Source: RMDB library OK2TST, as collected in RNAgym. This 177-nucleotide RNA was probed chemically with DMS and 2A3. DMS adducts were read by reverse transcription with MarathonRT. The RNA was probed in 150 mM KOAc, 10 mM MgCl2 and 150 mM bicine (pH 8.5) at 24 C.

[RMDB]
RNA sequence: GGGAACGACUCGAGUAGAGUCGAAAAAUGGAGCAGCGGCCAAUGUGGAUGAGAACAAUGGUAUGGACACCUCGGGCAGCGGCGCCGUGCAGAAGAAGAAGUUCACGCUUUCGUUCGAGGACUACAAGUGACGUUGUUGAUUCGUCAACAACGUCACAAAAGAAACAACAACAACAAC
Reactivity to DMS in 0.01 (KOAc 150mM, MgCl2 10mM, bicine 150mM(pH8.5), 24C), signal-to-noise 1, nucleotides 027 to 126: a030u020g010g020a090g030c070a060g000c000g000g050c010c070a080a090u000g040u000g000g000a120u000g000a160g000a160a110c020a000a060u010g020g010u020a040u010g000g000a080c150a110c020c050u000c000g020g010g000c010a090g010c150g010g000c080g020c030c030g000u000g000c030a070g010a090a040g010a080a120g000a050a080g000u000u000c070a120c050g040c040u000u020u000c150g010u010u000c010g000a020g000g030a110c040u020a070c250a040a040
Reactivity to 2A3 in 0.01 (KOAc 150mM, MgCl2 10mM, bicine 150mM(pH8.5), 24C), signal-to-noise 1, nucleotides 027 to 126: a040u090g010g000a040g000c010a010g050c000g000g030c000c000a040a040u210g000u150g060g020a180u050g010a050g030a110a080c080a110a110u050g100g040u090a090u080g060g020a010c010a010c000c030u030c000g020g020g020c010a060g060c040g030g000c030g050c030c010g020u030g010c070a020g030a170a000g010a040a000g050a060a030g140u100u090c020a030c060g030c000u120u130u240c030g050u000u010c010g000a000g060g020a060c070u000a030c130a210a000